[RMDB]
RNA sequence: GGGAACGACUCGAGUAGAGUCGAAAAGUAAAGCAUUUCCAUGCACCAGGUGAUGGUCUGAAUACCUCACAUGGGUUUCCCUUCUCAACAACCCUAAGAGGUUUACUGAUAUCAACCUGGUUUCACAGAAGGGGAAAUUGAAGCUUGGAGAACUCAACGCAUAAAAUGAGUUCGCUCAUUUUAUGCGAAAAGAAACAACAACAACAAC
Reactivity to DMS in 0.01 (KOAc 150mM, MgCl2 10mM, bicine 150mM(pH8.5), 24C), signal-to-noise 2, nucleotides 027 to 156: g010u000a110a060a080g100c040a070u000u000u010c070c020a150u000g040c100a090c030c000a000g010g040u000g010a060u000g010g020u020c050u010g010a190a110u000a020c000c010u000c030a180c120a110u000g000g000g030u000u000u000c020c080c060u000u000c110u040c090a060a220c060a070a210c010c000c040u000a100a170g030a030g000g020u010u000u000a300c020u010g010a090u000a090u000c010a040a140c010c000u000g000g000u010u000u010c020a100c130a050g000a070a090g030g000g040g020a020a090a040u010u010g010a080a240g000c090u010u010g040g010a210g020a040a230c000u040c010a010a300
Reactivity to 2A3 in 0.01 (KOAc 150mM, MgCl2 10mM, bicine 150mM(pH8.5), 24C), signal-to-noise 2, nucleotides 027 to 156: g140u150a120a050a020g020c010a020u050u080u040c010c010a010u050g020c010a030c000c000a000g000g000u000g020a080u080g020g030u000c010u010g080a090a050u080a120c000c010u010c000a010c020a190u120g010g000g000u000u030u000c020c000c000u130u030c060u000c030a100a240c040a020a010c020c020c010u060a120a010g030a010g010g040u010u070u040a110c050u010g020a020u010a010u060c040a080a120c000c000u000g000g000u000u000u000c010a020c030a010g040a020a060g020g030g040g010a010a010a030u040u100g070a050a010g000c020u010u010g020g030a090g030a050a020c000u050c130a070a000